[RMDB]
RNA sequence: GGGAACGACUCGAGUAGAGUCGAAAACAUGACCUGUUCGCAGGUCAUGAAAGUGGACGAGGAGCGAUGAACCCACACAAAACAAGUCAUCGCAAAAUAAAAAAAGCAAGUGCUUCGGCACUUGCAAGUAGGAUAUAUAGUUCGCUAUAUAUCCUACAAAAGAAACAACAACAACAAC
Reactivity to DMS in 0.01 (KOAc 150mM, MgCl2 10mM, bicine 150mM(pH8.5), 24C), signal-to-noise 5, nucleotides 027 to 126: c010a000u000g000a000c010c000u000g020u000u010c180g030c000a010g010g000u000c010a000u000g010a030a090a100g030u000g000g010a210c160g010a150g010g020a150g020c000g020a010u000g010a040a110c090c010c000a020c040a120c140a060a030a040a050c120a060a070g010u000c010a000u000c010g020c010a120a050a090a090u020a020a010a060a070a050a100a120g000c000a000a000g010u000g010c010u000u010c160g030g010c000a000c000u000u000g010c010a000a030
Reactivity to 2A3 in 0.01 (KOAc 150mM, MgCl2 10mM, bicine 150mM(pH8.5), 24C), signal-to-noise 7, nucleotides 027 to 126: c000a000u000g000a000c000c000u010g010u040u060c180g010c080a010g000g000u000c000a000u000g000a010a000a010g030u020g010g020a030c080g050a110g140g120a150g040c000g000a000u010g000a060a080c010c020c000a000c010a000c020a020a080a010a010c050a030a020g040u020c010a000u010c000g000c010a020a040a040a010u150a020a060a010a010a000a000a010g000c000a000a000g000u000g000c010u090u170c270g060g000c000a000c000u000u000g010c000a000a010

Structure probing data (DMS and 2A3) for a 177-nucleotide construct. The RNA was probed in 150 mM KOAc, 10 mM MgCl2 and 150 mM bicine (pH 8.5) at 24 C. For DMS, 6,494 sequencing reads were counted. For 2A3 the reverse transcriptase was SuperScript II with manganese.